[RMDB]
RNA sequence: GGGAACGACUCGAGUAGAGUCGAAAAAUUGCCGACGCCGAACACAUUGGCCAGCAGGAUGCCGGCGAUCCGGUCGCGGAAGCGUUCGAUGACGGCGCGGGCGGAGUGGACGCAUGGCUGCCAUGUGGUUUUACUCAGGAUUCGUCCUGAGUAAAACAAAAGAAACAACAACAACAAC
Reactivity to DMS in 0.01 (KOAc 150mM, MgCl2 10mM, bicine 150mM(pH8.5), 24C), signal-to-noise 5, nucleotides 027 to 126: a130u010u010g000c030c010g000a110c130g010c050c040g000a100a190c050a030c030a050u010u010g010g010c090c050a030g000c030a110g010g010a050u010g010c050c020g020g010c090g010a070u000c020c020g000g000u000c020g010c010g020g010a130a120g000c010g020u000u000c120g020a150u010g000a060c020g010g010c010g010c020g000g000g000c020g000g000a040g000u000g010g000a180c130g010c020a030u010g010g010c020u000g000c010c010a030u000g010u000g010
Reactivity to 2A3 in 0.01 (KOAc 150mM, MgCl2 10mM, bicine 150mM(pH8.5), 24C), signal-to-noise 4, nucleotides 027 to 126: a020u100u090g080c000c010g040a080c060g010c050c040g050a080a020c020a000c000a060u070u180g050g000c150c020a000g010c010a000g070g260a030u070g080c130c040g060g000c020g020a030u000c000c020g130g300u040c040g000c030g050g070a140a060g110c010g000u050u130c150g170a130u270g040a010c020g010g060c010g020c000g020g010g000c040g010g000a040g030u100g050g000a020c020g000c040a030u060g040g000c000u020g010c020c000a030u050g010u050g080

The data come from the RNA Mapping Database (RMDB), library OK2TST. An RNA of 177 nucleotides, treated with DMS and 2A3 and read out base by base. For 2A3 the reverse transcriptase was SuperScript II with manganese. Reactivities are rounded to 0.1 and cut off at 0 and 3. Conditions: 150 mM KOAc, 10 mM MgCl2 and 150 mM bicine (pH 8.5), 24 C.